RNA sequence: GGGAACGACUCGAGUAGAGUCGAAAAGAAAGGCGCGCCUGACAUCUAAAUGGAGUUGCCGCGAGAAACUUUUAUUUCUUAGGAAAUAAAACUGGGAGGAAAUCGCGGUCCGCCUGUAGGCAAGAAAGGGUUAAGUUAUCUUCGGAUAACUUAACCCAAAAGAAACAACAACAACAAC
Reactivity to 2A3 in 0.01 (KOAc 150mM, MgCl2 10mM, bicine 150mM(pH8.5), 24C), signal-to-noise 2, nucleotides 027 to 126: g060a000a100a000g040g000c010g000c030g010c030c010u040g050a040c000a030u030c020u220a090a170a100u160g040g000a080g030u110u090g020c000c000g000c000g010a040g040a040a110a040c030u000u000u050u000a000u000u020u000c000u020u110a070g060g050a020a000a000u000a000a030a080a070c140u160g010g180g000a120g000g160a050a110a080u010c000g000c000g000g020u020c010c030g060c000c000u040g060u070a030g030g050c100a060a010g030a090a050a050
Reactivity to DMS in 0.01 (KOAc 150mM, MgCl2 10mM, bicine 150mM(pH8.5), 24C), signal-to-noise 2, nucleotides 027 to 126: g010a050a010a020g000g010c030g020c110g000c010c010u020g010a060c080a060u040c060u010a130a090a130u000g000g020a090g000u020u020g010c000c000g000c010g000a060g020a150a100a070c040u010u000u000u010a020u000u000u000c000u000u020a160g010g000a030a000a010u010a000a010a010a090c180u030g020g010g030a150g010g000a030a070a110u010c000g040c020g000g000u000c170c050g000c000c000u000g000u030a080g000g000c040a050a080g040a080a080a200
Source: RMDB library OK1LIB, as collected in RNAgym. Structure probing data (2A3 and DMS) for a 177-nucleotide construct. Values cover nucleotides 27 to 126. 2A3 adducts were read by reverse transcription with SuperScript II with manganese.